[RMDB]
RNA sequence: GGGAACGACUCGAGUAGAGUCGAAAAGAUAUGGAACCUAUUAAAGUCCAACAGCUUUACGUGUUGUUAGCUUCGGAAACGAAGCUAACAACACGUAAAGACAUGGACAAAUAUGGUUCCUAAGUCACCUAAACAAUAAGUUCGCUUAUUGUUUAGGAAAAGAAACAACAACAACAAC
Reactivity to DMS in 0.01 (KOAc 150mM, MgCl2 10mM, bicine 150mM(pH8.5), 24C), signal-to-noise 3, nucleotides 027 to 126: g010a080u000a300u010g000g010a020a010c000c000u000a020u000u000a080a200a250g010u000c000c000a040a110c290a230g010c000u000u000u010a000c010g050u010g000u000u000g000u000u010a010g010c000u000u010c000g030g020a050a090a250c000g020a030a000g020c000u000a000a000c000a000a000c000a000c010g000u000a000a000a000g000a030c180a110u000g000g010a020c000a030a030a010u000a020u020g020g000u000u010c000c000u000a010a120g000u010c030a190